[RMDB]
RNA sequence: GGGAACGACUCGAGUAGAGUCGAAAAAGAGUGGUAUCUACGGAUACCACUCAAGUCACAGGUGGCGCGGCACUCAUAAUGAGCGCAGCGCCGAAUGCGCAGUACCUAACGAAGACGGUAAAAAGAACCUACCACAUCACUUCGGUGAUGUGGUAGGAAAAGAAACAACAACAACAAC
Reactivity to DMS in 0.01 (KOAc 150mM, MgCl2 10mM, bicine 150mM(pH8.5), 24C), signal-to-noise 1, nucleotides 027 to 126: a130g000a000g000u000g000g000u070a000u000c000u000a080c240g080g020a000u000a000c010c000a030c010u010c000a000a020g000u090c030a070c100a050g000g010u220g020g030c010g000c000g010g000c030a060c000u040c000a150u010a230a120u070g000a000g020c080g060c000a000g010c010g030c000c000g000a000a010u000g030c080g000c090a070g000u010a050c000c010u000a020a100c130g000a040a070g020a060c080g020g000u000a100a050a050a070a060g080a120a170
Reactivity to 2A3 in 0.01 (KOAc 150mM, MgCl2 10mM, bicine 150mM(pH8.5), 24C), signal-to-noise 3, nucleotides 027 to 126: a000g030a000g000u000g000g000u010a000u000c020u030a050c180g110g000a000u020a000c010c000a000c000u000c000a000a020g000u040c000a020c030a030g060g080u060g060g030c000g000c000g010g000c000a030c000u030c000a140u120a300a200u300g030a000g000c040g000c000a020g000c000g000c000c000g010a000a000u080g010c000g000c000a020g050u070a090c000c000u060a210a060c090g080a160a030g100a040c060g000g090u160a080a100a020a000a030g160a100a040